[RMDB]
RNA sequence: GGGAACGACUCGAGUAGAGUCGAAAAAGUACCUACGAGAUGAAUUCCGGAGGACAGGUUCGUAAUCGGUCUAGCCAAGUCAUCUUGGACUACGAAUCCCUUCCUGGUAAGUGGAUAAGACUUCGUAGCGAUGAGGGCGAAUACAAAAUCGUCUCUGCAGAGAGGGAGAUUUCGAUCUCCCUCUCUGAAAAGAAACAACAACAACAAC
Reactivity to 2A3 in 0.01 (KOAc 150mM, MgCl2 10mM, bicine 150mM(pH8.5), 24C), signal-to-noise 2, nucleotides 027 to 156: a020g080u050a050c000c000u010a000c050g000a000g000a110u020g030a050a120u120u040c020c050g010g000a040g010g030a000c090a140g050g000u070u040c020g050u080a010a140u150c130g050g020u050c070u100a040g030c010c020a040a000g040u130c080a100u060c080u000u010g040g010a010c020u000a000c000g000a010a000u030c000c000c000u050u070c030c000u040g030g060u120a080a050g060u160g080g010a040u010a140a110g030a050c030u030u010c070g040u010a020g040c020g140a120u060g030a080g040g030g000c020g020a000a000u200a040c050a050a120a040a030u010c010g000u000c040u000c030u120g030
Reactivity to DMS in 0.01 (KOAc 150mM, MgCl2 10mM, bicine 150mM(pH8.5), 24C), signal-to-noise 2, nucleotides 027 to 156: a090g010u010a070c050c000u010a070c000g000a110g010a100u030g010a050a080u000u000c030c080g030g020a300g000g000a010c090a040g020g010u010u000c210g010u010a090a030u000c020g000g040u020c040u010a070g000c010c000a040a080g020u000c080a050u000c030u000u000g000g010a090c030u000a020c030g010a030a050u000c000c000c030u000u000c000c020u030g050g010u000a060a150g020u000g020g020a050u000a020a050g000a050c060u000u000c010g010u000a020g030c020g000a100u000g000a080g020g010g000c040g010a070a100u000a220c130a020a040a040a100u000c020g030u000c010u000c000u000g010
Structure probing data (2A3 and DMS) for a 207-nucleotide construct. Conditions: 150 mM KOAc, 10 mM MgCl2 and 150 mM bicine (pH 8.5), 24 C. 2A3 adducts were read by reverse transcription with SuperScript II with manganese. For 2A3, 909 sequencing reads were counted. For DMS, 3,048 sequencing reads were counted. DMS adducts were read by reverse transcription with MarathonRT.